[RMDB]
RNA sequence: GGGAACGACUCGAGUAGAGUCGAAAAGGAGCGGAGCGUGUUUCAGAGGUGCGUAUAAAAUCCCAGGGGCGCCAGGAGGCAGCAGCGACGGCGCAGCGUGGGACGGCCAGGCGCGACGGGAGGGAAGGUACAUACACUUGUUCGCAAGUGUAUGUACAAAAGAAACAACAACAACAAC
Reactivity to DMS in 0.01 (KOAc 150mM, MgCl2 10mM, bicine 150mM(pH8.5), 24C), signal-to-noise 2, nucleotides 027 to 126: g020g020a080g010c130g010g010a100g000c090g020u010g020u000u000u010c060a070g010a120g030g010u010g010c030g010u010a090u000a050a110a100a110u000c010c010c010a140g000g020g000g000c040g030c010c020a160g000g000a210g020g000c000a040g000c110a060g010c080g000a140c110g000g000c030g030c010a070g010c040g010u010g020g020g000a030c070g000g000c090c110a040g000g010c020g010c040g020a090c080g010g000g010a140g000g000g010a150a060g020
Reactivity to 2A3 in 0.01 (KOAc 150mM, MgCl2 10mM, bicine 150mM(pH8.5), 24C), signal-to-noise 2, nucleotides 027 to 126: g050g020a060g080c100g030g030a040g010c060g030u030g030u050u070u060c070a060g020a010g070g060u070g030c000g010u090a050u070a210a110a000a030u030c010c010c020a050g000g000g010g010c020g000c020c020a060g050g030a070g150g000c060a090g020c030a020g030c090g070a050c040g010g020c010g010c040a020g100c080g080u020g000g000g020a040c010g020g030c040c030a050g030g030c010g000c010g010a080c020g030g020g020a130g020g010g010a000a050g110
This 177-nucleotide RNA was probed chemically with DMS and 2A3. In probing experiments dimethyl sulfate is read out at A N1 and C N3, which are open when not base-paired. The 2A3 profile rests on 2,247 reads. Reactivities are given for positions 27 through 126. It was measured as part of the RMDB library RFMREP. The DMS profile rests on 1,605 reads.